[RMDB]
RNA sequence: GGGAACGACUCGAGUAGAGUCGAAAAAUCAGUCCUUUAUAUUUUCCUCCUAGUGAGUAUCUGGAAAACAGGUGCAGAAAUGGAUCAUUUGAGACACCGUAGAAAUCUGGUUAAUCCUGCCUGCCUGCAAACGUAUAAAGUUCGCUUUAUACGUUUGAAAAGAAACAACAACAACAAC
Reactivity to DMS in 0.01 (KOAc 150mM, MgCl2 10mM, bicine 150mM(pH8.5), 24C), signal-to-noise 9, nucleotides 027 to 126: a060u020c080a070g000u010c030c030u000u020u010a080u020a090u030u000u010u010c030c010u000c040c030u010a070g010u010g000a100g020u000a030u010c040u000g010g000a080a050a090a140c080a050g000g010u010g010c060a090g010a040a060a060u010g010g000a100u020c050a090u010u010u010g000a120g010a150c050a040c030c030g010u010a080g010a060a090a070u010c050u010g010g010u010u010a090a090u010c020c010u000g000c070c030u000g010c030c020u000g000
Reactivity to 2A3 in 0.01 (KOAc 150mM, MgCl2 10mM, bicine 150mM(pH8.5), 24C), signal-to-noise 9, nucleotides 027 to 126: a010u080c030a020g070u070c010c000u050u140u030a240u020a060u080u080u050u030c010c010u030c010c010u050a050g040u030g200a030g030u050a060u030c050u070g030g030a020a080a020a080c030a030g010g020u040g020c010a010g090a080a110a050u110g040g020a060u080c060a110u040u080u180g080a080g010a020c040a020c050c020g020u020a030g080a080a090a020u060c050u060g010g000u050u060a050a030u040c000c010u010g020c000c010u020g020c000c000u020g010
Chemical mapping of a 177-nucleotide RNA with DMS and 2A3. For 2A3 the reverse transcriptase was SuperScript II with manganese. For DMS the reverse transcriptase was MarathonRT. Source: RMDB libraries RFM100 and RFMREP, as collected in RNAgym.